[RMDB]
RNA sequence: GGGAACGACUCGAGUAGAGUCGAAAAGGCGGUGCGCACCACCGAGCCGAUAUUGGCAUCGUGUCCGAAGUUCUCGAUCGCCACGUGCAAGGGGUGACGGCGCGUAUCGAUGUCGGCGAUGAUCGCCAAAGCUUUAACGCUUCGGCGUUAAAGCUUUAAAAGAAACAACAACAACAAC
Reactivity to DMS in 0.01 (KOAc 150mM, MgCl2 10mM, bicine 150mM(pH8.5), 24C), signal-to-noise 3, nucleotides 027 to 126: g000g020c010g000g000u000g040c090g000c100a040c050c000a120c030c040g030a270g040c000c000g000a090u010a030u010u020g000g080c080a040u000c030g000u010g000u090c080c090g040a150a230g020u030u050c020u010c030g030a100u020c140g020c010c010a080c200g040u090g050c040a060a230g000g000g040g000u030g020a210c030g010g010c020g000c020g030u030a070u000c020g010a050u010g010u000c040g000g000c000g000a100u000g010a030u000c030g030c030c000
Reactivity to 2A3 in 0.01 (KOAc 150mM, MgCl2 10mM, bicine 150mM(pH8.5), 24C), signal-to-noise 4, nucleotides 027 to 126: g070g010c020g080g080u050g030c160g000c040a070c010c020a070c000c040g010a030g030c000c020g020a020u040a030u060u070g030g010c050a060u040c050g020u040g140u090c050c020g070a050a040g050u250u090c040u020c010g060a090u070c110g000c000c080a060c170g110u230g030c050a070a040g010g000g030g030u030g070a040c030g010g020c020g000c020g040u010a040u080c030g000a010u050g050u120c000g000g000c030g060a110u120g040a080u150c020g000c030c010